[RMDB]
RNA sequence: GGGAACGACUCGAGUAGAGUCGAAAAGGGGGUCGCCGAGGGCGUGGCUGCGCGCCGAGGUGCGGGUGGCCUCGUAAAAACCCGCAACGGCAUAACUGCCAACACCAACUACGCUCUCGCGGCUUAAUGACCGCGACCUCGCCCGGUAGCCCUGCCGCACUUUACAUAAGUUCGCUUAUGUAAAGUGAAAAGAAACAACAACAACAAC
Reactivity to DMS in 0.01 (KOAc 150mM, MgCl2 10mM, bicine 150mM(pH8.5), 24C), signal-to-noise 1, nucleotides 027 to 156: g020g030g010g090g030u010c010g030c040c010g000a050g010g030g000c020g040u010g000g050c050u000g010c100g030c080g020c040c030g030a190g030g020u010g030c030g020g030g060u010g040g010c170c060u000c080g040u010a000a080a120a120a040c010c010c020g020c010a050a160c050g020g000c010a160u000a060a150c160u000g000c020c050a080a100c010a060c030c010a030a050c010u000a020c010g020c010u010c060u000c000g020c010g000g000c010u020u010a060a100u010g010a010c030c020g010c010g020a060c000c010u000c010g000c010c020c000g040g020u000a090g000c000c040c030u020g020c010c040g000
Reactivity to 2A3 in 0.01 (KOAc 150mM, MgCl2 10mM, bicine 150mM(pH8.5), 24C), signal-to-noise 3, nucleotides 027 to 156: g000g000g000g000g010u060c010g000c060c040g030a080g010g000g010c010g010u010g000g000c060u090g020c110g010c030g020c080c010g000a040g010g050u030g010c000g010g010g000u000g030g050c030c030u030c010g010u030a030a020a000a010a020c010c000c010g000c060a090a080c080g000g000c010a040u100a300a110c060u150g010c010c000a030a020c020a020c040c020a070a060c060u090a020c020g000c000u010c020u000c040g020c010g030g020c020u030u060a100a050u140g070a080c010c010g000c000g020a020c010c000u020c000g020c020c030c010g010g010u040a040g020c010c000c000u020g020c010c000g010